[RMDB]
RNA sequence: GGGAACGACUCGAGUAGAGUCGAAAAGCGGUAGGUUGUCUUUCUCCGAAGGUUGAAACGCAGGACAGUGGGAACGAUCAUCAUCCAGAUAGGCAGCGUGUCCUUCAGGUAAGGUGUCUGGAUUCGCUCAGAACAGAGUGUUCGCACUCUGUUCUGAAAAAGAAACAACAACAACAAC
Reactivity to 2A3 in 0.01 (KOAc 150mM, MgCl2 10mM, bicine 150mM(pH8.5), 24C), signal-to-noise 2, nucleotides 027 to 126: g050c030g020g060u050a030g040g000u040u050g000u100c020u050u040u030c090u000c010c080g070a070a030g060g010u050u050g040a070a080a010c030g030c030a030g050g040a020c000a030g030u050g020g070g000a040a060c070g030a040u080c010a010u020c000a020u000c060c000a000g030a140u070a070g060g050c010a030g030c040g000u050g010u080c000c000u040u130c050a040g060g030u090a040a050g050g030u030g020u040c040u010g000g060a060u050u070c070g030c020
Reactivity to DMS in 0.01 (KOAc 150mM, MgCl2 10mM, bicine 150mM(pH8.5), 24C), signal-to-noise 3, nucleotides 027 to 126: g020c040g000g000u010a050g010g040u000u000g010u000c060u010u010u010c020u000c020c030g030a150a110g010g010u010u000g000a070a080a090c090g040c080a060g020g030a010c050a050g020u000g000g010g030a100a050c120g000a090u000c110a070u000c070a040u010c020c020a060g000a030u000a040g030g000c100a070g000c050g010u010g000u010c010c040u000u000c040a070g000g000u020a030a080g000g010u020g000u000c040u000g000g000a060u010u040c040g010c070
Chemical mapping of a 177-nucleotide RNA with 2A3 and DMS. The data come from the RNA Mapping Database (RMDB), library OK1LIB. Values cover nucleotides 27 to 126. For DMS, 6,001 sequencing reads were counted. The RNA was probed in 150 mM KOAc, 10 mM MgCl2 and 150 mM bicine (pH 8.5) at 24 C. The 2A3 profile rests on 2,329 reads.